[RMDB]
Chemical mapping of a 177-nucleotide RNA with 2A3 and DMS. The 2A3 profile rests on 1,436 reads.

RNA sequence: GGGAACGACUCGAGUAGAGUCGAAAAAUCGUCUGUGGUCAAUUUUAGCGCCUGUCGACACCGAGUCAAUAAAUUUUCCGGCGCUGAGACGUGUCUGCAGUUCCGCUGAUAGGAAUGGACCAGAGAACCACUGGUAGCCUUUCGAGGCUACCAGUGGAAAAGAAACAACAACAACAAC
Reactivity to 2A3 in 0.01 (KOAc 150mM, MgCl2 10mM, bicine 150mM(pH8.5), 24C), signal-to-noise 3, nucleotides 027 to 126: a010u080c050g070u010c070u070g120u010g050g010u050c020a080a080u020u010u060u090a030g020c000g000c000c040u000g020u060c020g010a030c000a010c050c060g040a020g020u030c040a090a030u120a170a150a120u130u180u080u100c070c050g010g010c020g000c040u010g030a010g010a050c040g010u030g010u010c020u010g000c000a000g010u200u110c000c010g030c010u040g000a110u120a080g150g000a040a120u070g090g000a000c000c000a050g010a000g000a060a040
Reactivity to DMS in 0.01 (KOAc 150mM, MgCl2 10mM, bicine 150mM(pH8.5), 24C), signal-to-noise 1, nucleotides 027 to 126: a000u000c070g010u000c000u000g080u020g200g010u000c070a090a120u000u000u000u000a000g080c000g000c300c000u010g000u000c240g090a050c040a000c040c080g000a150g010u010c000a150a090u090a110a000a300u010u000u000u000c060c080g000g160c000g050c060u010g000a020g000a020c110g000u000g000u000c060u000g020c000a030g040u000u010c300c000g000c000u000g000a090u000a150g000g000a190a180u070g000g000a020c010c000a020g000a040g000a030a100